An RNA of 177 nucleotides, treated with 2A3 and DMS and read out base by base. The DMS profile rests on 3,228 reads. For 2A3 the reverse transcriptase was SuperScript II with manganese. The 2A3 profile rests on 3,247 reads.

[RMDB]
RNA sequence: GGGAACGACUCGAGUAGAGUCGAAAAUCAAAUAAUUCCACCGACUGCCCAUUGUGGGUUACGAGUUGCUCUGAUGAUGGCCCAAGUGGGAGUAAAGAGAAGAAGCCAGAUAGGAUCAACAAAAAAACUACUACAUUUAGUUCGCUAAAUGUAGUAGAAAAGAAACAACAACAACAAC
Reactivity to 2A3 in 0.01 (KOAc 150mM, MgCl2 10mM, bicine 150mM(pH8.5), 24C), signal-to-noise 3, nucleotides 027 to 126: u090c010a010a070a050u130a050a100u110u010c020c010a040c030c040g080a040c020u170g100c040c020c020a020u030u100g150u110g130g000g030u010u050a050c070g020a010g090u110u070g110c060u020c060u170g130a120u040g010a050u050g040g000c020c000c000a020a010g040u030g040g000g010a010g000u020a000a130a030g100a000g050a050a010g040a070a010g030c020c040a040g040a120u080a060g050g020a040u070c030a010a080c000a030a070a010a040a010a020a070
Reactivity to DMS in 0.01 (KOAc 150mM, MgCl2 10mM, bicine 150mM(pH8.5), 24C), signal-to-noise 4, nucleotides 027 to 126: u000c120a050a070a150u000a090a130u000u000c010c010a090c070c050g000a080c040u000g000c010c000c010a090u000u000g010u000g010g000g010u000u000a060c070g000a120g000u010u010g010c090u000c050u010g010a100u020g010a140u010g000g000c010c010c000a040a050g010u000g000g000g010a060g000u000a020a060a130g000a110g000a050a060g000a070a090g010c050c040a040g010a080u010a080g000g000a090u010c090a040a050c070a000a010a070a050a070a080a080